[RMDB]
RNA sequence: GGGAACGACUCGAGUAGAGUCGAAAAGCUCCAACAGUUACACUUAGAGGCUAAUAGUAGGGCCUGGGCUUUCUGUGUUAAAUGCCAUAAUGAUAUAUUGGCAGCAACAGACCCCAGUGAGGCUUUCGUACCUUCUAGUUCGCUAGAAGGAAAAGAAACAACAACAACAAC
Reactivity to DMS in 0.01 (KOAc 150mM, MgCl2 10mM, bicine 150mM(pH8.5), 24C), signal-to-noise 9, nucleotides 027 to 129: g000c040u040c000c090a100a090c180a080g030u030u040a080c090a050c080u030u050a070g020a070g000g000c040u010a080a080u010a110g000u040a040g010g000g020c040c020u000g040g020g020c030u030u030u010c000u000g030u010g040u020u030a060a080a100u000g000c020c000a000u000a080a100u070g040a100u020a130u030a080u010u010g010g010c020a030g020c090a040a040c020a020g020a030c300c000c020c030a010g000u040g020a040g020g020c090u000u040u020c030g000u060a170
Reactivity to 2A3 in 0.01 (KOAc 150mM, MgCl2 10mM, bicine 150mM(pH8.5), 24C), signal-to-noise 9, nucleotides 027 to 129: g030c040u030c050c010a020a020c020a080g090u100u160a050c060a020c070u060u120a040g020a020g070g000c030u020a050a030u070a180g130u040a070g010g000g060c000c000u000g000g000g000c000u040u160u000c000u010g030u000g040u050u120a090a200a050u050g000c000c010a020u060a090a080u240g210a040u040a020u030a050u260u070g010g000c000a010g010c010a030a060c010a010g020a040c020c000c000c000a010g020u040g060a040g020g050c000u040u070u040c010g010u040a070